[RMDB]
Chemical mapping of a 177-nucleotide RNA with DMS and 2A3.
Conditions: 150 mM KOAc, 10 mM MgCl2 and 150 mM bicine (pH 8.5), 24 C.
It was measured as part of the RMDB library OK2TST.
Values cover nucleotides 27 to 126.

RNA sequence: GGGAACGACUCGAGUAGAGUCGAAAACUGAGGUCAGCGCGGGCUGUUUCCUGGCCCUUGGGAAUGUGCCAGGACCCGUCCCCUAAGGACUAGCGAGGAGGUGACUCACUGUGACAAGGAGACCCCAGAGCUUUCUAUUAUUCGUAAUAGAAAGCUCAAAAGAAACAACAACAACAAC
Reactivity to DMS in 0.01 (KOAc 150mM, MgCl2 10mM, bicine 150mM(pH8.5), 24C), signal-to-noise 5, nucleotides 027 to 126: c050u000g010a090g010g010u000c020a060g010c120g010c110g000g010g010c140u000g000u000u010u000c010c010u000g010g010c000c040c060u010u000g010g010g000a150a060u000g010u000g020c010c020a050g010g010a070c210c030c030g010u000c020c000c010c090u010a120a100g010g000a060c040u010a070g010c060g010a080g000g010a110g020g010u010g010a150c050u010c030a070c060u010g000u010g010a070c090a080a080g000g010a110g000a130c050c000c010c050a130
Reactivity to 2A3 in 0.01 (KOAc 150mM, MgCl2 10mM, bicine 150mM(pH8.5), 24C), signal-to-noise 5, nucleotides 027 to 126: c020u040g030a020g060g040u040c010a010g040c040g000c060g060g030g010c030u050g050u100u140u010c010c000u000g000g010c020c030c000u030u070g100g040g050a120a110u080g030u070g010c000c010a010g010g010a010c010c010c010g040u040c000c000c000c000u060a080a070g070g000a050c030u040a050g050c020g050a050g010g030a030g050g020u040g040a070c010u040c040a090c050u050g040u060g070a040c030a040a030g020g010a030g030a030c020c010c000c000a010